[RMDB]
RNA sequence: GGGAACGACUCGAGUAGAGUCGAAAAAAACAAAAAACAAGAACACUGUCAUGCUGAGAAUGGAAUCUUGUCCAAUUAAGAGUUGUGUUCCCAGCCGGAUGUGGUGGCUCACGCCUGUAAUCCCAGCCUGUGAAUAUCAUUUCGAUGAUAUUCACAGAAAAGAAACAACAACAACAAC
Reactivity to 2A3 in 0.01 (KOAc 150mM, MgCl2 10mM, bicine 150mM(pH8.5), 24C), signal-to-noise 4, nucleotides 027 to 126: a010a000a000c110a030a080a010a000a000a010c060a050a030g060a080a010c030a010c080u060g030u090c010a050u100g020c070u070g060a020g050a130a050u060g060g020a040a030u040c020u050u070g030u070c030c020a090a100u140u090a150a020g020a010g080u060u060g140u050g010u080u010c000c000c010a000g020c000c030g030g000a030u070g030u070g080g030u020g020g000c010u020c020a010c030g020c000c010u060g030u070a040a040u040c010c010c000a010g050c000
Reactivity to DMS in 0.01 (KOAc 150mM, MgCl2 10mM, bicine 150mM(pH8.5), 24C), signal-to-noise 7, nucleotides 027 to 126: a050a040a040c120a020a040a050a060a080a040c070a050a050g000a060a070c040a050c040u000g000u000c030a070u000g010c070u000g000a060g000a060a030u000g010g000a070a060u000c040u000u000g010u010c080c080a080a070u020u010a060a070g000a050g010u000u000g020u010g010u000u000c010c000c010a090g000c050c060g000g000a060u000g010u010g010g010u000g000g000c040u000c070a050c110g000c030c010u000g000u010a060a090u010c000c000c010a130g010c190